[RMDB]
RNA sequence: GGGAACGACUCGAGUAGAGUCGAAAAGUCAAGAUGUGUAGGAUAGGUGGGAGGCUUUGUAGUGUGGACGCCAGUCUGCAUGGAGCCGACCUUGAAAUACCACCCUUUAAUGGAAAAACAAAGUGAAGUCUAAUUAGCAGUUCGCUGCUAAUUAGACAAAAGAAACAACAACAACAAC
Reactivity to 2A3 in 0.01 (KOAc 150mM, MgCl2 10mM, bicine 150mM(pH8.5), 24C), signal-to-noise 1, nucleotides 027 to 126: g070u060c030a040a060g050a220u130g110u030g050u110a040g040g030a100u040a100g010g000u090g030g130g040a140g000g000c010u090u040u100g140u110a050g030u000g000u010g090g000a000c010g050c100c010a020g030u000c000u000g000c010a010u040g050g030a000g000c000c010g000a030c000c020u000u030g010a010a010a010u050a040c010c000a030c000c010c000u000u060u070a130a080u110g070g040a090a070a020a060a050c100a060a110a020g090u130g100a080a000
Reactivity to DMS in 0.01 (KOAc 150mM, MgCl2 10mM, bicine 150mM(pH8.5), 24C), signal-to-noise 3, nucleotides 027 to 126: g040u010c100a070a080g020a040u000g000u010g020u000a030g000g020a090u000a060g010g010u000g020g010g010a190g010g000c000u010u000u000g020u000a110g050u000g020u000g010g000a000c010g000c270c260a100g010u000c000u000g000c020a000u000g010g000a020g010c010c000g000a100c100c040u000u000g010a090a090a080u000a070c020c020a060c050c010c020u000u000u010a070a080u000g010g010a050a030a060a070a070c130a040a050a080g010u000g010a080a150

Chemical mapping of a 177-nucleotide RNA with 2A3 and DMS. Reactivities are rounded to 0.1 and cut off at 0 and 3.